[RMDB]
RNA sequence: GGGAACGACUCGAGUAGAGUCGAAAAUAAAAGGACAACGAAAUGCGCCUCUGCAACCUCCAGCUGGUGUUGUCUGGGAACCUGAUCAAAACUUCCGAGUUUGAUCAGGCCAAUGCAGAGAAAAAAAACAUCCAAUCCUAUUCGUAGGAUUGGAUGUAAAAGAAACAACAACAACAAC
Reactivity to DMS in 0.01 (KOAc 150mM, MgCl2 10mM, bicine 150mM(pH8.5), 24C), signal-to-noise 2, nucleotides 027 to 126: u010a040a070a070a090g000g000a020c010a000a040c020g020a070a130a110u010g010c140g020c170c000u010c000u000g010c010a040a100c110c050u000c060c020a140g010c080u000g000g010u010g000u000u000g010u020c010u010g000g010g020a090a270c000c000u000g010a010u010c000a010a010a030a030c000u010u010c230c140g000a080g010u010u000u000g010a020u000c010a020g010g010c010c040a080a040u000g020c010a000g010a040g040a000a010a000a060a010a000a080
Reactivity to 2A3 in 0.01 (KOAc 150mM, MgCl2 10mM, bicine 150mM(pH8.5), 24C), signal-to-noise 1, nucleotides 027 to 126: u100a000a090a020a000g060g000a020c020a030a010c050g100a030a080a150u120g000c050g030c020c000u000c000u010g000c010a040a050c010c010u000c010c030a010g000c040u030g010g070u060g070u150u030g030u000c020u010g000g000g000a030a050c000c000u010g030a020u000c030a040a020a090a160c020u130u000c070c220g050a030g050u000u000u030g000a000u000c000a010g000g000c040c000a020a020u000g000c000a010g000a000g000a100a000a000a000a000a000a000